[RMDB]
RNA sequence: GGGAACGACUCGAGUAGAGUCGAAAAAGAAGGCUCUUGUUAGUCUGACCUAUCGAAAGGGAAUGUAGUUAAGAUUCUACAACUGGGAUGCAGAUUUUCAGCGGUAACGCAUAUGAACUUGGUGACAUUACGUAAUAUCCUUCGGGAUAUUACGUAAAAAAGAAACAACAACAACAAC
Reactivity to 2A3 in 0.01 (KOAc 150mM, MgCl2 10mM, bicine 150mM(pH8.5), 24C), signal-to-noise 8, nucleotides 027 to 126: a000g140a020a030g030g000c020u020c040u090u100g100u150u080a010g000u000c010u010g060a070c000c000u060a100u090c070g090a100a030a030g050g020g020a080a160u090g020u040a040g010u050u130a180a050g040a190u110u000c000u030a030c010a060a050c050u030g030g040g000a010u070g010c020a020g030a090u060u050u010u070c030a010g010c000g020g020u100a070a060c040g000c010a000u040a100u220g040a050a040c040u050u090g030g010u030g050a040c010a090
Reactivity to DMS in 0.01 (KOAc 150mM, MgCl2 10mM, bicine 150mM(pH8.5), 24C), signal-to-noise 9, nucleotides 027 to 126: a100g010a070a040g010g000c010u000c030u020u010g010u040u020a020g020u000c010u000g000a300c040c010u000a070u030c080g000a070a090a070g000g000g000a110a080u020g010u000a040g010u010u020a090a130g010a130u010u010c020u000a040c040a080a100c080u010g000g010g000a070u010g010c080a060g010a110u010u000u010u000c070a080g010c080g000g000u030a070a110c070g020c030a100u020a110u010g000a060a080c110u000u010g000g010u010g000a100c180a160